The record gives the reactivity of an RNA of 177 nucleotides to 2A3 and DMS. For DMS, 708 sequencing reads were counted. Conditions: 150 mM KOAc, 10 mM MgCl2 and 150 mM bicine (pH 8.5), 24 C.
RNA sequence: GGGAACGACUCGAGUAGAGUCGAAAACAAUGGAAAGUGGAAGGCUUCAUUCUUCUUUUGCCUGCUUGCACUUACUUGCCAGCACAUCUAUUGGAUCCUACUUUUUUAGGAUUCCAGCUUAUAUAGACCAUGUCAUUCCGUUCGCGGAAUGACAUGGAAAAGAAACAACAACAACAAC
Reactivity to 2A3 in 0.01 (KOAc 150mM, MgCl2 10mM, bicine 150mM(pH8.5), 24C), signal-to-noise 1, nucleotides 027 to 126: c010a000a020u070g030g000a090a020a020g040u020g060g060a030a030g120g010c080u100u060c080a070u000u000c060u010u000c000u030u200u030u070g010c000c000u000g000c020u000u040g020c000a030c030u120u200a060c010u080u060g000c010c010a000g000c020a060c000a030u000c060u070a110u060u070g020g000a010u000c000c010u000a120c040u240u260u160u070u050u080a010g000g000a020u200u000c000c000a010g050c030u150u030a050u010a010u020a250g010a020
Reactivity to DMS in 0.01 (KOAc 150mM, MgCl2 10mM, bicine 150mM(pH8.5), 24C), signal-to-noise 1, nucleotides 027 to 126: c070a020a030u010g000g000a060a020a130g060u000g000g010a060a060g020g000c120u010u020c100a040u010u000c110u010u030c040u050u000u000u000g020c070c020u000g000c050u000u030g000c020a030c160u030u010a060c200u000u000g030c030c000a070g000c030a100c130a110u000c000u020a040u020u000g020g020a080u000c000c000u000a010c300u000u010u000u020u010u000a020g000g000a030u030u030c020c000a040g000c240u030u000a090u010a030u010a020g000a050